[RMDB]
RNA sequence: GGGAACGACUCGAGUAGAGUCGAAAAGAAAGGCAGCCAGUGCAGCCCACGCAGCCACUCGACGCAUGCUUUUGCAUGCCGCCCACGACUGAGGGCAGCUGCGGCACUGAGGGCAGCUGCCGAAAGAACCUAUCGUAAUAUUCGUAUUACGAUAGGUAAAAGAAACAACAACAACAAC
Reactivity to DMS in 0.01 (KOAc 150mM, MgCl2 10mM, bicine 150mM(pH8.5), 24C), signal-to-noise 9, nucleotides 027 to 126: g000a090a120a170g010g020c010a020g000c010c020a050g010u000g000c020a060g010c030c030c060a300c050g000c010a020g000c010c060a090c090u000c120g000a100c200g000c010a010u000g000c000u000u010u010u010g020c000a000u000g000c010c160g000c010c000c040a110c150g010a100c200u010g010a090g010g010g030c050a110g000c000u000g000c010g010g000c110a030c030u000g000a090g010g010g010c100a130g000c010u000g000c000c000g000a020a060a100g000a140
Reactivity to 2A3 in 0.01 (KOAc 150mM, MgCl2 10mM, bicine 150mM(pH8.5), 24C), signal-to-noise 8, nucleotides 027 to 126: g100a030a110a020g010g000c010a010g010c030c020a020g020u020g030c010a080g160c010c020c000a000c010g010c000a000g000c010c030a090c060u100c080g110a080c070g010c000a010u020g010c020u120u280u280u300g000c020a000u000g000c000c020g000c000c010c000a080c070g300a090c130u160g070a170g020g020g000c000a010g000c010u000g000c000g030g000c020a010c030u050g020a100g030g080g010c030a000g000c000u000g000c000c000g000a010a010a000g030a010